The data come from the RNA Mapping Database (RMDB), library OK2TRN.
The record gives the reactivity of an RNA of 177 nucleotides to 2A3 and DMS.
[RMDB]
RNA sequence: GGGAACGACUCGAGUAGAGUCGAAAAGAUUGAGAUCCUCAUUAACCUAAUGCAACCUCGCCAGCUUGUUUUCCGCCCCGAGGUUUUCUGGAAUCACCCCAUCCAGCGUGUCAUCCAUAAUGAGUUGACAAAAGAUAGGGUUCGCCCUAUCUUUUGUAAAAGAAACAACAACAACAAC
Reactivity to 2A3 in 0.01 (KOAc 150mM, MgCl2 10mM, bicine 150mM(pH8.5), 24C), signal-to-noise 1, nucleotides 027 to 126: g060a040u130u150g050a030g020a070u090c000c020u000c010a000u020u070a110a150c000c000u040a110a070u120g050c020a000a050c000c040u050c010g010c000c000a050g000c000u050u150g080u120u110u110u000c020c000g010c000c000c000c000g000a020g060g000u020u040u090u040c010u030g020g020a060a080u080c000a120c010c030c010c010a000u000c000c000a010g020c000g040u060g010u030c010a040u000c050c010a030u080a230a100u090g020a040g020u030u100g050
Reactivity to DMS in 0.01 (KOAc 150mM, MgCl2 10mM, bicine 150mM(pH8.5), 24C), signal-to-noise 5, nucleotides 027 to 126: g030a110u010u010g000a110g020a100u000c070c020u000c050a060u000u010a060a110c050c050u010a090a070u010g010c100a060a060c050c020u000c050g000c080c050a070g010c050u020u000g020u000u000u010u000c030c060g010c040c030c070c020g010a050g010g010u000u010u000u000c030u000g000g010a070a050u010c070a230c050c010c000c040a150u000c020c020a030g020c140g010u000g010u000c030a040u000c020c040a090u000a060a080u000g000a070g000u000u000g010
2A3 adducts were read by reverse transcription with SuperScript II with manganese.